[RMDB]
RNA sequence: GGGAACGACUCGAGUAGAGUCGAAAAUCGGUGGGGUUCGCCCCACCGAAAAGAGAGAAGUGAGAGAGUCCUCAGUGAACGAAAGUGCGAUCCCACGCCACAAAAGAUGCGGCUUCGGCCGCAUCAACCAUCUAUCGAUGUUCGCAUCGAUAGAUGGAAAAGAAACAACAACAACAAC
Reactivity to 2A3 in 0.01 (KOAc 150mM, MgCl2 10mM, bicine 150mM(pH8.5), 24C), signal-to-noise 2, nucleotides 027 to 126: u030c000g000g000u000g000g030g000g010u080u030c110g080c020c000c010c000a000c000c010g010a000a000a000a000g090a000g010a000g010a140a020g110u080g020a040g000a030g010a010g110u080c000c010u030c040a100g120u060g140a070a030c040g040a120a040a020g090u080g020c020g010a040u020c010c040c010a010c010g000c030c020a050c020a020a120a000a030g010a000u000g010c000g000g000c010u030u070c220g050g020c000c000g000c000a000u000c010a000a000
Reactivity to DMS in 0.01 (KOAc 150mM, MgCl2 10mM, bicine 150mM(pH8.5), 24C), signal-to-noise 3, nucleotides 027 to 126: u000c000g010g010u000g040g010g000g010u000u000c270g020c010c000c000c000a000c010c000g000a000a000a060a080g000a060g010a090g010a130a100g000u010g010a050g000a110g010a170g010u000c100c010u020c040a050g020u000g010a100a090c070g000a060a030a050g010u010g010c000g000a150u000c010c010c000a250c030g010c040c030a100c140a090a020a130a100g010a010u000g010c000g020g010c010u000u000c190g020g010c000c000g020c000a000u000c000a090a140
The record gives the reactivity of an RNA of 177 nucleotides to 2A3 and DMS. For 2A3 the reverse transcriptase was SuperScript II with manganese. For DMS, 1,776 sequencing reads were counted. It was measured as part of the RMDB library M2PK50. Values are in units of 0.01, from 0 to 300, in steps of 10.